[RMDB]
RNA sequence: GGGAACGACUCGAGUAGAGUCGAAAAAUGCUCGGAACGCAGGGUAUACAGUUGUACGCAAGCCCCCCACAGUUUUUUUCCCUGCAGCAAAGCAUCAGGCUCAUAGCAGCGUUUCGGUGCCACGAUAGGAUGGUAAAAUGUUCGCAUUUUACCAUCCAAAAGAAACAACAACAACAAC
Reactivity to DMS in 0.01 (KOAc 150mM, MgCl2 10mM, bicine 150mM(pH8.5), 24C), signal-to-noise 2, nucleotides 027 to 126: a080u010g000c010u000c050g010g000a100a160c180g010c010a040g000g010g000u020a080u000a070c160a040g000u000u000g030u010a060c190g000c120a090a130g020c020c010c010c020c010c050a080c130a020g000u000u000u020u010u000u010u000c000c020c000u000g020c010a080g020c100a080a050a070g000c030a050u000c110a090g010g010c000u000c030a110u000a110g020c090a040g000c030g000u010u020u010c040g010g010u000g000c040c040a100c110g000a110u000a080

Record summary: This 177-nucleotide RNA was probed chemically with DMS. The reactions ran in a buffer of 150 mM KOAc, 10 mM MgCl2 and 150 mM bicine (pH 8.5), at 24 C.